Conditions: 150 mM KOAc, 10 mM MgCl2 and 150 mM bicine (pH 8.5), 24 C. Structure probing data (DMS and 2A3) for a 207-nucleotide construct. For 2A3, 2,491 sequencing reads were counted. DMS adducts were read by reverse transcription with MarathonRT. Reactivities are given for positions 27 through 156.
RNA sequence: GGGAACGACUCGAGUAGAGUCGAAAAGCUAGCCCAGGCGAUUCUCCAUAGCCGACGGCGAAACUUUAUGGAGCUACGGCCUGCGAGAACCUGCCCACUGGUGAGCGCCGGCCCGACAAUCAAACAGUGGGAUACACACGUAGACGCACGCUGGACGGAUCUGUAGGUUGUUCGCAACCUACAGAUCAAAAGAAACAACAACAACAAC
Reactivity to DMS in 0.01 (KOAc 150mM, MgCl2 10mM, bicine 150mM(pH8.5), 24C), signal-to-noise 2, nucleotides 027 to 156: g010c020u000a300g040c000c000c020a300g020g010c000g000a070u000u000c060u000c060c030a060u000a260g000c000c000g020a150c120g000g010c000g000a200a040a060c040u010u000u010a160u000g000g020a150g010c040u000a060c080g050g010c000c000u000g050c000g030a120g000a120a100c010c010u000g000c020c000c000a050c030u000g000g050u000g010a150g020c050g010c010c080g040g010c000c030c010g030a070c050a010a130u000c060a050a070a110c110a050g030u000g010g040g010a200u010a020c070a040c060a050c030g020u000a110g000a090c050g000c050a050c100g020c040u000g010g010a070c000g030
Reactivity to 2A3 in 0.01 (KOAc 150mM, MgCl2 10mM, bicine 150mM(pH8.5), 24C), signal-to-noise 1, nucleotides 027 to 156: g060c030u020a010g000c010c000c020a000g000g000c010g000a010u130u020c010u000c010c000a030u020a010g010c000c020g020a030c040g070g010c010g030a050a020a010c020u080u170u150a040u040g010g010a020g010c010u020a020c020g000g000c000c000u020g010c020g000a010g040a040a030c000c010u050g010c020c000c000a020c000u010g000g020u090g040a050g030c010g000c010c030g020g000c000c000c000g010a010c030a050a030u170c130a090a030a050c040a050g000u000g000g020g020a010u130a020c120a030c020a010c030g040u070a040g060a100c030g050c050a010c070g030c070u040g040g050a040c050g070